An RNA of 177 nucleotides, treated with DMS and 2A3 and read out base by base.
[RMDB]
RNA sequence: GGGAACGACUCGAGUAGAGUCGAAAAAAUAACGGGUAGGCCAGGCCACGGAUCCCGUAGAACACCAACAUUAAUGGGUAGCUUUUCAUCCCCAGGCCAAACAGCAUAAACAAGCAAUGCAUCACCACAUUGGAAGGAUUUUCGAAUCCUUCCAAUGAAAAGAAACAACAACAACAAC
Reactivity to DMS in 0.01 (KOAc 150mM, MgCl2 10mM, bicine 150mM(pH8.5), 24C), signal-to-noise 4, nucleotides 027 to 126: a070a080u010a070a050c060g010g030g010u000a070g020g010c020c050a120g010g000c040c040a130c090g000g000a100u010c020c010c020g020u000a060g010a100a050c090a110c060c020a030a070c090a100u000u000a070a080u010g010g000g010u000a090g010c080u000u000u000u010c110a120u000c020c000c000c070a090g000g010c020c030a040a030a040c070a040g030c050a050u000a040a060a060c130a080a070g020c100a050a030u000g010c060a060u000c060a070c060c040a140
Reactivity to 2A3 in 0.01 (KOAc 150mM, MgCl2 10mM, bicine 150mM(pH8.5), 24C), signal-to-noise 3, nucleotides 027 to 126: a000a010u140a000a040c050g010g000g010u020a030g060g040c050c040a020g060g010c000c020a030c040g000g000a030u060c030c000c020g000u000a050g040a030a020c050a020c050c020a040a060c030a110u160u270a090a060u070g030g020g010u020a030g050c040u010u080u000u090c030a070u040c040c000c000c020a000g030g000c000c000a000a090a010c040a010g020c020a020u070a080a090a020c050a100a020g000c020a020a050u050g000c010a020u030c020a020c050c040a020

For DMS, 3,243 sequencing reads were counted. It was measured as part of the RMDB library OK2TST. Reactivities are given for positions 27 through 126. 2A3 adducts were read by reverse transcription with SuperScript II with manganese.